The data come from the RNA Mapping Database (RMDB), library OK2TST. Chemical mapping of a 177-nucleotide RNA with DMS. For DMS the reverse transcriptase was MarathonRT. In probing experiments dimethyl sulfate is read out at A N1 and C N3, which are open when not base-paired.
[RMDB]
RNA sequence: GGGAACGACUCGAGUAGAGUCGAAAAAAUCAGGCAACCUAAAAGCCGGGGCAGAAGACAAGGCUUGCUUUAGCUUGUGAGUCUUCCUUUCAUGGGAGUGAGAUCAUACAGGGGGUGAGCUAAGGGAAUGCGUAACCACAUUCGUGUGGUUACGCAUAAAAGAAACAACAACAACAAC
Reactivity to DMS in 0.01 (KOAc 150mM, MgCl2 10mM, bicine 150mM(pH8.5), 24C), signal-to-noise 1, nucleotides 027 to 126: a060a050u030c150a120g010g030c070a110a110c050c040u000a070a070a110a150g010c030c000g000g000g010g040c180a030g000a090a050g010a020c080a040a100g010g000c030u010u020g020c030u010u000u000a090g020c120u020u010g010u000g000a200g010u010c000u000u010c020c030u000u000u050c110a030u000g000g000g000a070g040u000g000a070g010a000u010c070a130u000a070c130a120g020g000g010g010g000u000g020a030g010c010u000a110a110g010g010g010a090